This 207-nucleotide RNA was probed chemically with 2A3. The data come from the RNA Mapping Database (RMDB), library OK3TST. The reactions ran in a buffer of 150 mM KOAc, 10 mM MgCl2 and 150 mM bicine (pH 8.5), at 24 C. Reactivities are given for positions 27 through 156.
RNA sequence: GGGAACGACUCGAGUAGAGUCGAAAAUGCCUUAAGGCUGUUAGUUGAUGAUAGUCAGGUUAGCCGCCAGCCCAGAGACAUCACAGAACGCAUAGAAAUAGUUGAAGAGGUCCUGUCGGAAGAUAGAGAAGAAACCUUCUUCGAAGAGGACCUACUCGACCAUUUCACGAUUCGUCGUGAAAUGGUCAAAAGAAACAACAACAACAAC
Reactivity to 2A3 in 0.01 (KOAc 150mM, MgCl2 10mM, bicine 150mM(pH8.5), 24C), signal-to-noise 2, nucleotides 027 to 156: u160g020c000c000u080u100a040a070g000g000c020u030g020u060u040a190g000u020u020g010a060u010g020a120u170a100g010u010c060a020g040g020u030u030a040g070c000c010g060c110c010a010g040c000c000c000a010g000a030g000a060c050a020u000c050a020c010a020g080a080a060c060g000c060a130u060a150g110a030a090a060u120a160g040u070u110g000a020a020g070a000g050g000u010c010c000u040g080u140c050g090g010a000a040g020a010u300a010g070a000g080a150a150g060a110a060a000c000c010u040u030c000u010u010c000g010a060a010g070a020g220g000a000c060c000u020a040c000u000c090